[RMDB]
RNA sequence: GGGAACGACUCGAGUAGAGUCGAAAAUGUGGCGCUGCGGGUGUCUGCCCGCCCUGACCGCAAUGAAAGAAAACAAAACAAGAGGGAAGAAAUGUGCGCUCCGCCCCACAGGCCCUCGUCGCACGCAUAGUGAGUACUGGUUCGCCAGUACUCACUAAAAAGAAACAACAACAACAAC
Reactivity to DMS in 0.01 (KOAc 150mM, MgCl2 10mM, bicine 150mM(pH8.5), 24C), signal-to-noise 1, nucleotides 027 to 126: u000g000u000g000g020c070g000c050u020g010c060g020g040g000u000g000u010c250u010g000c020c070c000g010c010c040c000u000g020a150c060c010g040c010a030a110u000g040a080a140a130g000a180a060a120a110c160a050a070a130a090c270a030a130g000a050g000g030g000a140a130g000a060a120a190u000g010u020g000c030g020c040u020c000c090g010c020c000c030c100a060c160a120g000g000c010c000c010u000c060g010u010c040g030c000a050c060g010c240a170

An RNA of 177 nucleotides, treated with DMS and read out base by base.
DMS adducts were read by reverse transcription with MarathonRT.